[RMDB]
RNA sequence: GGGAACGACUCGAGUAGAGUCGAAAAGUAAGCAAAGACGUAAUAACCGUCAUGGUUAGUAAAGUGAGCGCACGCCGUAAGAAAUGCAAACGCGUUAUGAUUCAGAACACCUGGUGCGCUAUUAUAACCCAUCAUCAUAUUUCGAUAUGAUGAUGGGAAAAGAAACAACAACAACAAC
Reactivity to 2A3 in 0.01 (KOAc 150mM, MgCl2 10mM, bicine 150mM(pH8.5), 24C), signal-to-noise 5, nucleotides 027 to 126: g040u070a030a030g080c080a170a050a020g080a050c010g040u060a110a060u060a080a080c010c000g070u140c090a050u130g020g000u040u020a030g020u110a020a060a050g060u070g110a010g010c010g000c010a000c020g060c010c010g020u030a050a010g080a090a090a010u060g000c040a260a090a060c080g010c000g030u000u010a090u150g110a080u090u070c040a050g050a150a020c040a020c070c020u040g020g000u010g000c000g000c010u000a010u070u090a020u010a020a020
Reactivity to DMS in 0.01 (KOAc 150mM, MgCl2 10mM, bicine 150mM(pH8.5), 24C), signal-to-noise 7, nucleotides 027 to 126: g020u010a060a100g010c090a080a070a090g010a030c070g010u000a110a100u000a040a050c090c010g010u010c210a100u010g000g000u000u000a030g000u000a060a100a110g000u010g000a040g020c020g000c000a020c030g010c140c110g010u010a090a110g010a050a070a050u010g010c050a060a100a090c200g010c050g010u000u000a080u010g010a150u000u010c080a060g010a100a070c160a080c050c040u000g010g010u000g010c030g020c000u000a020u010u000a060u010a090a160
This 177-nucleotide RNA was probed chemically with 2A3 and DMS. The reactions ran in a buffer of 150 mM KOAc, 10 mM MgCl2 and 150 mM bicine (pH 8.5), at 24 C. Reactivities are given for positions 27 through 126. For DMS, 9,798 sequencing reads were counted.